RNA sequence: GGGAACGACUCGAGUAGAGUCGAAAAAGUUUGUAUAAGCACUGUUUAAGCGUCCCAGUGCAUGCCAAUUGGUGUUUACAGACGAGUAUGGUAUUGACCAUAUGAUACUAUUCUCUCUCUCAGGAGAGGAGAAUAGAUAACUACAAAGGAUGCACAAGCAUAUACGUAUGUUCGCAUACGUAUAUGCAAAAGAAACAACAACAACAAC
Reactivity to 2A3 in 0.01 (KOAc 150mM, MgCl2 10mM, bicine 150mM(pH8.5), 24C), signal-to-noise 9, nucleotides 027 to 156: a000g060u070u040u030g070u020a090u040a180a060g010c010a010c020u010g080u070u110u120a100a020g010c020g010u010c000c010c010a000g000u000g000c010a020u090g040c000c040a260a300u130u280g000g000u060g040u050u090u040a040c030a030g020a020c030g010a030g030u010a000u010g030g000u050a130u250u280g170a070c000c000a000u010a010u030g040a020u020a090c000u000a000u000u000c000u000c000u000c000u000c000u010c090a130g110g110a020g030a010g060g040a020g000a010a000u000a000g000a010u050a040a040c060u110a060c070a040a090a010g010g000a000u010g000c010a010c030a050a020
Reactivity to DMS in 0.01 (KOAc 150mM, MgCl2 10mM, bicine 150mM(pH8.5), 24C), signal-to-noise 4, nucleotides 027 to 156: a140g010u000u000u000g020u000a080u000a080a150g000c010a050c010u000g020u000u010u000a080a130g020c030g030u000c030c030c020a190g020u010g020c030a100u000g000c030c020a100a180u000u010g020g020u000g010u000u000u010a170c050a110g000a100c060g020a220g000u000a000u000g010g030u000a230u000u010g020a090c000c010a030u000a030u000g010a210u000a120c000u000a020u000u000c000u000c000u000c000u000c010u010c200a210g050g000a040g000a030g020g010a020g010a020a010u000a020g000a130u000a040a100c080u000a100c060a030a050a090g010g000a090u000g010c020a070c080a090a300
About this RNA:
Chemical mapping of a 207-nucleotide RNA with 2A3 and DMS. The RNA was probed in 150 mM KOAc, 10 mM MgCl2 and 150 mM bicine (pH 8.5) at 24 C.